[RMDB]
Conditions: 150 mM KOAc, 10 mM MgCl2 and 150 mM bicine (pH 8.5), 24 C. Chemical mapping of a 177-nucleotide RNA with 2A3 and DMS. In probing experiments dimethyl sulfate is read out at A N1 and C N3, which are open when not base-paired. High 2A3 reactivity points to a flexible backbone, as in loops and unpaired stretches. For DMS, 4,534 sequencing reads were counted. Values cover nucleotides 27 to 126.

RNA sequence: GGGAACGACUCGAGUAGAGUCGAAAAGGUUGAUCCGCCACAAGCGCAUUGCUGCGCCGGCCGAUCAGGCCGCUGCCGCCGGCAAGGCGAAGGAGUAACCCCUCAUGUCUCUGAUUUCUCUCCAAGGUAUGAACUAAGGGUUCGCCCUUAGUUCAUAAAAAGAAACAACAACAACAAC
Reactivity to 2A3 in 0.01 (KOAc 150mM, MgCl2 10mM, bicine 150mM(pH8.5), 24C), signal-to-noise 2, nucleotides 027 to 126: g030g000u040u020g020a050u000c020c020g030c050c030a100c030a080a050g060c020g010c030a040u020u150g060c040u030g000c020g000c020c000g020g000c000c030g030a130u190c130a030g020g020c000c000g040c080u080g050c030c050g060c070c100g020g030c060a020a020g020g010c030g030a050a060g030g030a030g040u040a050a050c000c000c000c020u030c020a040u080g040u000c020u000c020u020g050a150u040u100u000c060u000c010u020c050c020a030a010g110g040
Reactivity to DMS in 0.01 (KOAc 150mM, MgCl2 10mM, bicine 150mM(pH8.5), 24C), signal-to-noise 4, nucleotides 027 to 126: g000g020u000u000g010a070u000c010c080g050c070c050a110c230a130a150g010c010g010c000a070u000u000g000c070u000g010c050g000c010c030g010g010c000c090g010a090u010c260a100g010g020c000c010g000c150u010g020c090c030g010c030c020g000g020c030a030a060g000g010c020g000a080a110g010g000a050g000u010a080a090c040c010c020c040u010c070a050u000g010u000c020u000c020u000g000a090u010u000u010c020u000c030u020c030c050a090a100g010g020